This 177-nucleotide RNA was probed chemically with DMS and 2A3.
Values cover nucleotides 27 to 126.
The reactions ran in a buffer of 150 mM KOAc, 10 mM MgCl2 and 150 mM bicine (pH 8.5), at 24 C.
The data come from the RNA Mapping Database (RMDB), library OK1LIB.
RNA sequence: GGGAACGACUCGAGUAGAGUCGAAAAGAGCUGAAGUACAGCAAGAACGACGCCAUCCUUGGCACAGCGUCGAAGAUAAGCGUGCCGAUUGCCAAGGAUUAACGGCACGCGAGGCGAAGACGCCAGACAUGAUACGCCUAUUCGUAGGCGUAUCAUGAAAAGAAACAACAACAACAAC
Reactivity to DMS in 0.01 (KOAc 150mM, MgCl2 10mM, bicine 150mM(pH8.5), 24C), signal-to-noise 6, nucleotides 027 to 126: g000a140g000c010u000g000a140a140g040u030a190c030a020g030c020a140a070g000a130a140c080g020a060c060g010c010c080a110u020c030c010u000u000g000g030c020a080c220a140g010c020g000u000c020g020a110a130g000a080u030a060a120g010c020g010u010g000c000c000g000a160u030u010g010c010c010a030a010g010g020a130u000u020a000a080c010g000g000c000a000c000g010c010g010a030g000g000c030g030a200a120g020a090c050g020c000c070a120g010a160
Reactivity to 2A3 in 0.01 (KOAc 150mM, MgCl2 10mM, bicine 150mM(pH8.5), 24C), signal-to-noise 8, nucleotides 027 to 126: g130a010g000c020u030g040a170a050g170u170a160c010a000g000c020a010a030g080a110a030c040g020a010c010g000c020c030a020u010c010c010u010u030g000g000c020a020c060a120g020c020g040u040c030g050a070a020g060a120u230a070a090g000c000g000u000g000c010c000g040a130u040u120g000c010c010a010a000g010g000a010u030u140a030a010c020g000g000c000a000c000g000c010g000a060g000g010c040g080a150a050g110a110c050g000c000c000a020g030a020